[RMDB]
RNA sequence: GGGAACGACUCGAGUAGAGUCGAAAAAUAAAUAUGUAUGGAUUUGAUCCCACUGAAUACUCAUUUGUGCGGUUCGUUGACCCAUUGACCGGAGCUGUGAUAGAUGACUCUCCAUAUACCGAUAUCCUACUAUGACCACAUUCGUGUGGUCAUAGUAAAAAGAAACAACAACAACAAC
Reactivity to DMS in 0.01 (KOAc 150mM, MgCl2 10mM, bicine 150mM(pH8.5), 24C), signal-to-noise 3, nucleotides 027 to 126: a100u020a030a040a060u040a120u030g010u000a070u020g010g000a060u000u000u000g000a110u010c010c000c010a070c080u010g050a060a060u010a070c110u000c110a090u020u010u030g010u020g000c080g010g000u000u000c070g020u010u020g000a110c050c020c020a110u010u020g000a080c150c060g000g000a080g020c060u000g010u000g000a050u020a050g000a110u030g000a100c090u000c020u000c010c030a040u010a110u040a050c080c060g000a060u020a070u000c060c020
Reactivity to 2A3 in 0.01 (KOAc 150mM, MgCl2 10mM, bicine 150mM(pH8.5), 24C), signal-to-noise 4, nucleotides 027 to 126: a000u190a010a090a000u280a030u100g040u060a080u060g050g080a080u050u000u230g130a100u070c000c020c020a010c030u060g060a050a070u110a140c050u060c090a130u020u050u090g070u070g010c070g000g070u030u020c050g030u010u140g030a070c000c020c020a040u040u140g080a050c000c030g050g060a020g000c080u090g050u020g080a070u090a070g070a040u070g030a070c010u010c000u000c040c010a010u030a010u010a100c020c050g020a050u040a090u110c000c010